[RMDB]
RNA sequence: GGGAACGACUCGAGUAGAGUCGAAAAUUCCACUCACCCACUUCUCGAGAAUAUCUUCUCUUCCAUCGCGCUUCUUCUUCGAUUCGGAUCGGCUCAUCUCGACAAGAGGCGGCGGUCCUCAGUGCUCGCUUAACUAAUAGUUCGCUAUUAGUUAAGCAAAAGAAACAACAACAACAAC
Reactivity to DMS in 0.01 (KOAc 150mM, MgCl2 10mM, bicine 150mM(pH8.5), 24C), signal-to-noise 6, nucleotides 027 to 126: u000u000c010c010a130c100u010c060a110c040c030c030a090c070u000u000c030u010c050g010a100g000a090a060u010a090u010c060u000u000c030u000c020u000u010c040c020a080u000c060g020c050g010c040u000u000c020u000u000c050u000u000c030g020a110u010u000c050g010g010a130u000c030g010g010c040u000c030a130u000c010u000c020g020a090c220a050a140g000a050g010g020c110g010g020c040g010g000u000c010c010u000c080a080g010u000g010c110u000c120
Reactivity to 2A3 in 0.01 (KOAc 150mM, MgCl2 10mM, bicine 150mM(pH8.5), 24C), signal-to-noise 6, nucleotides 027 to 126: u040u000c010c000a020c020u060c020a070c000c020c010a040c030u100u010c030u040c050g070a050g040a080a050u080a070u110c040u070u010c010u000c000u050u010c030c000a080u040c020g000c010g000c040u040u010c000u050u000c000u030u030c040g090a100u030u040c030g040g060a050u020c010g060g000c030u020c030a080u020c020u020c010g070a060c060a110a050g010a010g030g020c030g040g020c020g030g030u020c000c010u000c020a050g030u050g050c040u060c070

An RNA of 177 nucleotides, treated with DMS and 2A3 and read out base by base. For 2A3 the reverse transcriptase was SuperScript II with manganese. For DMS the reverse transcriptase was MarathonRT. For DMS, 7,048 sequencing reads were counted. The 2A3 profile rests on 12,299 reads.